[RMDB]
Chemical mapping of a 177-nucleotide RNA with 2A3 and DMS. For DMS the reverse transcriptase was MarathonRT. The RNA was probed in 150 mM KOAc, 10 mM MgCl2 and 150 mM bicine (pH 8.5) at 24 C. Reactivities are rounded to 0.1 and cut off at 0 and 3. The 2A3 profile rests on 1,223 reads.
RNA sequence: GGGAACGACUCGAGUAGAGUCGAAAACUGGACUGGGUCACAUCAACGUAGAUCGGAUCAAGUUGCUGCACGGUUGCCAGCGCAGUCGCCUGACCGUUCUGUACCAAUGCGCCUUCCGUCACGUUCGAGACAGUUCACGGUUCGCCGUGAACUGUCUAAAAGAAACAACAACAACAAC
Reactivity to 2A3 in 0.01 (KOAc 150mM, MgCl2 10mM, bicine 150mM(pH8.5), 24C), signal-to-noise 1, nucleotides 027 to 126: c010u050g010g010a030c060u070g010g030g040u050c030a030c020a080u040c040a060a100c060g070u090a070g010a020u080c000g020g050a140u020c020a010a000g060u020u050g020c050u040g000c040a030c080g090g050u130u200g100c040c000a070g030c010g000c050a000g040u000c020g010c030c040u000g020a030c010c000g000u020u000c000u030g040u030a060c090c000a040a040u080g030c030g010c000c000u080u040c030c000g040u040c020a030c120g040u050u120c070g030
Reactivity to DMS in 0.01 (KOAc 150mM, MgCl2 10mM, bicine 150mM(pH8.5), 24C), signal-to-noise 2, nucleotides 027 to 126: c040u000g040g040a050c070u020g030g010g000u010c050a090c060a040u010c070a070a070c170g000u020a050g000a010u000c020g000g020a170u000c050a040a020g000u000u010g020c030u010g060c000a060c090g010g000u000u010g020c140c070a090g020c090g000c010a000g020u010c110g000c050c040u010g020a030c080c020g000u000u000c020u000g010u010a060c090c130a070a050u000g010c080g000c040c030u000u000c030c080g030u010c070a090c060g010u000u000c120g000